RNA sequence: GGGAACGACUCGAGUAGAGUCGAAAACCUUGGUCCUUCGGGACCAAGGAAACCCGAAGACAUACAGACUGUGGGCGGCGAGACAAACCACAAGAGUCGCUAAAAGCGUCUGGUUCGCCAGACGCAAGCAUCACUUUAGGUUCGCCUAAAGUGAUGCAAAAGAAACAACAACAACAAC
Reactivity to DMS in 0.01 (KOAc 150mM, MgCl2 10mM, bicine 150mM(pH8.5), 24C), signal-to-noise 1, nucleotides 027 to 126: c010c000u000u000g010g000u000c000c010u000u010c200g000g010g000a010c000c000a000a000g000g030a010a040a110c010c010c010g010a080a070g000a070c140a070u000a100c120a150g010a100c020u030g000u010g000g030g000c120g040g010c070g040a090g000a080c030a030a060a140c030c020a050c050a050a170g010a140g000u010c000g010c070u000a060a030a200a140g010c000g020u000c010u000g050g030u010u010c120g050c000c000a000g000a000c000g000c000a000a010
Reactivity to 2A3 in 0.01 (KOAc 150mM, MgCl2 10mM, bicine 150mM(pH8.5), 24C), signal-to-noise 2, nucleotides 027 to 126: c000c000u010u000g000g000u020c000c030u030u060c240g130g000g000a000c000c000a000a000g000g000a060a030a000c020c000c010g040a040a030g100a060c060a040u270a040c060a130g100a040c020u040g020u040g050g000g050c060g030g020c030g030a050g040a080c070a100a150a030c030c010a030c020a040a040g040a000g040u030c060g010c140u080a100a080a050a000g000c010g000u000c000u000g040g060u030u030c220g010c020c000a000g000a000c000g000c000a000a000